[RMDB]
RNA sequence: GGGAACGACUCGAGUAGAGUCGAAAAGUCUAGCGAUUUAGGGAUCCGAUCCGGGUGGCAGAACUCAACUGCAUGAGUAGACACGCAAGUCGCGUAUUGGCCGACCGGCCAAGGAUCUGCUAGACGACAUGGUAUUUACCUUCGGGUAAAUACCAUGAAAAGAAACAACAACAACAAC
Reactivity to DMS in 0.01 (KOAc 150mM, MgCl2 10mM, bicine 150mM(pH8.5), 24C), signal-to-noise 4, nucleotides 027 to 126: g000u000c000u000a010g010c010g020a160u010u010u010a190g040g000g010a010u010c010c000g000a300u010c000c000g000g000g020u010g010g020c010a100g000a110a060c010u000c000a030a080c130u010g020c200a100u010g000a040g000u000a130g000a160c100a020c010g000c010a090a130g010u010c130g000c030g000u000a120u000u010g000g010c000c000g000a030c040c030g000g000c150c130a040a230g000g000a020u000c000u000g000c000u000a000g000a020c010g000a170
Reactivity to 2A3 in 0.01 (KOAc 150mM, MgCl2 10mM, bicine 150mM(pH8.5), 24C), signal-to-noise 5, nucleotides 027 to 126: g000u000c000u010a010g000c030g120a150u080u120u300a190g110g010g000a010u000c010c010g000a030u000c010c000g020g010g020u090g010g000c020a030g050a110a040c000u000c030a030a160c140u260g040c150a100u050g010a000g020u070a030g030a040c070a010c080g000c020a110a140g190u230c090g010c010g010u040a090u090u220g120g000c000c010g030a050c010c010g000g000c020c020a050a030g000g000a010u010c010u020g000c010u000a000g000a000c000g000a000
Description:
Source: RMDB library OK2TRN, as collected in RNAgym. An RNA of 177 nucleotides, treated with DMS and 2A3 and read out base by base. For DMS, 4,294 sequencing reads were counted. For DMS the reverse transcriptase was MarathonRT. As a SHAPE reagent, 2A3 marks flexible, mostly unpaired nucleotides at the ribose 2'-OH. The reactions ran in a buffer of 150 mM KOAc, 10 mM MgCl2 and 150 mM bicine (pH 8.5), at 24 C. Reactivities are rounded to 0.1 and cut off at 0 and 3.